The data come from the RNA Mapping Database (RMDB), library OK2TST. An RNA of 177 nucleotides, treated with DMS and read out base by base.
RNA sequence: GGGAACGACUCGAGUAGAGUCGAAAACAGCCUGGGUGACAGAGGAAGAUCCUUCUCACCGCCCUCCCCGCCCCCACCCCCACUAAGACAGUCUUGCUCUGUUGCCCAGAGCUGGAAUGCAGUGGUGAUCAAGAGUGAGUUUCGACUCACUCUUGAUAAAAGAAACAACAACAACAAC
Reactivity to DMS in 0.01 (KOAc 150mM, MgCl2 10mM, bicine 150mM(pH8.5), 24C), signal-to-noise 3, nucleotides 027 to 126: c020a010g000c010c000u000g000g010g050u000g010a020c020a040g000a050g020g010a040a020g000a070u000c130c090u000u000c060u000c060a120c170c110g000c020c020c010u000c020c010c000c060g000c060c020c010c030c010a180c060c020c010c000c010a030c160u010a060a100g000a090c190a070g010u000c000u000u000g010c000u000c010u000g010u000u000g000c020c030c000a000g000a050g030c000u010g000g000a050a040u010g000c060a050g020u010g010g010u010g000